[RMDB]
Structure probing data (2A3 and DMS) for a 207-nucleotide construct. The 2A3 profile rests on 1,125 reads. The RNA was probed in 150 mM KOAc, 10 mM MgCl2 and 150 mM bicine (pH 8.5) at 24 C. It was measured as part of the RMDB library OK3TST. Reactivities are given for positions 27 through 156.

RNA sequence: GGGAACGACUCGAGUAGAGUCGAAAAUGGAAUGAAGGAGAGGAGGCACAAAUAAUAAAUCCACAGCACAUGGCUUUAGAUAAAUGUUGAGUUGAGGCAAGAAGAGAGUUUGAGAUGAUCCUGGCUUUGAGUGUGGGUAAUGGGUAGGAUGAUGGUCUCAUAAGGCCUCAUUCGUGAGGCCUUAUGAAAAAGAAACAACAACAACAAC
Reactivity to 2A3 in 0.01 (KOAc 150mM, MgCl2 10mM, bicine 150mM(pH8.5), 24C), signal-to-noise 2, nucleotides 027 to 156: u100g030g030a030a000u070g010a060a030g120g000a030g000a000g010g010a020g010g000c060a010c010a060a080a000u170a020a040u080a010a050a000u020c040c010a010c030a030g020c060a020c000a120u030g040g000c020u130u060u050a060g030a090u090a070a150a030u120g000u030u060g030a030g000u010u030g030a030g020g000c020a000a020g050a110a010g050a000g010a010g000u030u170u140g070a120g000a040u110g030a030u000c040c010u020g000g000c000u040u040u050g000a000g010u050g090u090g030g010g000u060a090a030u070g020g020g020u020a020g000g000a000u030g020a030u070g020g040u000c020
Reactivity to DMS in 0.01 (KOAc 150mM, MgCl2 10mM, bicine 150mM(pH8.5), 24C), signal-to-noise 1, nucleotides 027 to 156: u030g030g030a050a060u000g030a100a130g000g020a130g020a120g050g010a040g020g000c020a050c040a060a060a080u000a070a150u010a080a070a070u010c020c030a100c090a030g050c020a100c070a140u000g030g020c050u000u000u000a050g020a140u000a010a070a090u010g030u000u010g000a160g010u000u000g000a140g010g000c030a080a070g020a070a090g000a110g020a130g030u000u000u030g000a090g010a180u000g010a020u000c070c000u000g010g060c150u000u000u020g010a050g020u000g000u000g030g000g000u000a040a120u020g010g040g000u010a040g010g020a050u000g030a130u000g040g050u000c080